[RMDB]
RNA sequence: GGGAACGACUCGAGUAGAGUCGAAAAGGCAGGACUUACCAAGUCUGGGGGCCGAUGAGGGUUGGCUCAAAGUAGGGUUUUGACUUGAAAACUCAAGCUGUGACCCCAAAUCGAUGGAGGUAAAUGAAAAAUCCAUCUGCCUUCGGGCAGAUGGAAAGAUGCAGUAGAAGUUCGCUUCUACUGCAUCAAAAGAAACAACAACAACAAC
Reactivity to 2A3 in 0.01 (KOAc 150mM, MgCl2 10mM, bicine 150mM(pH8.5), 24C), signal-to-noise 2, nucleotides 027 to 156: g030g010c040a000g020g040a020c000u040u060a120c070c030a080a020g040u010c020u060g010g000g000g050g000c020c100g020a040u100g040a090g000g030g030u100u130g030g000c000u030c060a080a070a010g080u120a050g010g030g010u020u030u060u060g070a080c000u020u070g040a090a080a110a100c050u030c020a030a010g000c010u060g040u090g090a040c000c030c010c030a000a120a090u120c040g040a030u070g020g040a060g030g030u050a070a050a090u200g070a060a080a000a000a000u000c000c000a000u010c000u000g000c000c010u020u030c110g010g000g000c000a000g000a000u000g010g000a000a000a000
Reactivity to DMS in 0.01 (KOAc 150mM, MgCl2 10mM, bicine 150mM(pH8.5), 24C), signal-to-noise 1, nucleotides 027 to 156: g020g020c040a170g010g000a050c010u000u000a180c010c050a130a110g000u010c030u000g020g010g030g100g130c150c100g030a090u010g030a080g020g030g010u000u000g010g010c070u010c060a050a060a170g000u030a100g000g040g020u000u000u000u000g010a030c040u000u000g010a030a080a120a060c120u000c000a010a050g030c000u020g010u010g040a130c010c030c010c050a000a080a110u000c050g000a150u000g010g010a080g010g000u000a030a030a170u020g000a020a080a040a080a160u000c010c000a010u000c000u000g010c010c000u010u000c300g010g020g000c000a000g000a020u010g000g010a000a010a000
The record gives the reactivity of an RNA of 207 nucleotides to 2A3 and DMS. Source: RMDB library M2RFPK, as collected in RNAgym. The DMS profile rests on 2,147 reads. The RNA was probed in 150 mM KOAc, 10 mM MgCl2 and 150 mM bicine (pH 8.5) at 24 C.